[RMDB]
RNA sequence: GGGAACGACUCGAGUAGAGUCGAAAAGAUUGACUAUAAAGUAAGGUGGCAUGGUGGCUGAACAAUGCUGUGCUGGUUGUGUCAAUAUGAGUGUGAGCUGUGUCAGUAUGAGUGUGAUUGUAUCAACAUGAGUGUGAGCACCUGUGGGUAAUUUUAAACUCUGAUUAUGAUUCGUCAUAAUCAGAGUAAAAGAAACAACAACAACAAC
Reactivity to 2A3 in 0.01 (KOAc 150mM, MgCl2 10mM, bicine 150mM(pH8.5), 24C), signal-to-noise 7, nucleotides 027 to 156: g070a060u140u140g020a040c050u060a060u090a300a080a040g120u100a050a040g050g020u030g000g020c040a040u050g010g020u020g010g040c040u020g020a040a020c040a080a070u070g000c020u020g010u030g020c030u040g000g050u050u040g030u020g030u030c010a040a040u090a110u230g050a050g040u070g010u020g020a010g000c060u030g010u010g020u050c000a010g010u040a060u100g060a040g040u050g010u020g030a040u030u080g060u070a090u110c050a000a050c020a070u090g030a030g050u070g010u020g020a010g010c010a030c030c030u030g000u050g020g020g020u030a020a110u080u120u070u200a130a050
Reactivity to DMS in 0.01 (KOAc 150mM, MgCl2 10mM, bicine 150mM(pH8.5), 24C), signal-to-noise 4, nucleotides 027 to 156: g000a120u010u000g010a080c040u010a140u000a090a070a140g020u010a070a100g020g030u000g020g000c040a070u010g050g040u000g020g010c060u000g020a070a070c080a060a080u000g020c020u010g020u010g030c020u000g020g010u000u000g010u010g020u000c050a060a100u000a100u000g000a090g000u000g010u000g000a110g020c040u010g020u000g000u000c040a060g020u000a060u000g010a120g020u000g010u010g010a110u010u000g030u010a170u010c040a030a030c030a050u010g000a140g020u000g030u010g010a170g010c000a050c050c030u010g040u000g010g000g010u020a040a080u000u000u000u000a050a130
The data come from the RNA Mapping Database (RMDB), library OK3TST. An RNA of 207 nucleotides, treated with 2A3 and DMS and read out base by base. The 2A3 profile rests on 5,369 reads. 2A3 adducts were read by reverse transcription with SuperScript II with manganese.